Structure probing data (2A3 and DMS) for a 207-nucleotide construct. The RNA was probed in 150 mM KOAc, 10 mM MgCl2 and 150 mM bicine (pH 8.5) at 24 C. Values cover nucleotides 27 to 156. High 2A3 reactivity points to a flexible backbone, as in loops and unpaired stretches.

RNA sequence: GGGAACGACUCGAGUAGAGUCGAAAAUGUUGGUUCUCCCGCAACGCUACUCUGUUUACCAGGUCAGGUCCGGAAGGAAGCAGCCAAGGCAGAUGACGCGUGUGCCGGGAUGUAGCUGGCAGGGCAAAAUCCGAAUUUAAGUUCGCUUAAAUUCGGACAAGUGGAAUGGCUUCGGCCAUUCCACUUGAAAAGAAACAACAACAACAAC
Reactivity to 2A3 in 0.01 (KOAc 150mM, MgCl2 10mM, bicine 150mM(pH8.5), 24C), signal-to-noise 1, nucleotides 027 to 156: u010g000u010u020g000g010u010u030c000u000c000c000c000g010c000a010a000c000g000c000u000a010c010u000c000u000g040u000u140u080a180c090c050a100g000g030u110c010a010g000g010u030c000c000g010g130a040a070g020g000a010a000g020c000a000g030c000c020a050a070g020g010c010a000g010a040u030g000a030c040g040c000g000u110g280u040g020c080c020g000g000g060a020u020g040u060a010g030c000u000g030g030c000a050g060g000g000c080a100a020a030a170u000c000c000g000a000a000u000u000u000a030a000g020u000u070c130g010c120u020u000a000a000a020u000u000c000g000g000a000
Reactivity to DMS in 0.01 (KOAc 150mM, MgCl2 10mM, bicine 150mM(pH8.5), 24C), signal-to-noise 1, nucleotides 027 to 156: u000g000u030u010g040g000u000u010c040u000c000c000c000g000c010a090a030c000g010c000u000a260c190u000c040u010g000u000u000u000a200c030c050a250g020g010u040c000a300g000g000u000c010c010g000g170a300a210g010g010a010a080g000c040a150g000c000c040a150a300g030g000c000a030g010a000u020g020a150c120g000c000g070u000g030u000g020c070c030g010g150g000a030u010g060u040a130g010c000u000g020g010c090a060g000g000g000c080a040a110a090a080u000c010c000g010a020a020u020u020u010a020a030g030u000u020c300g050c020u000u000a010a010a020u000u000c000g030g000a000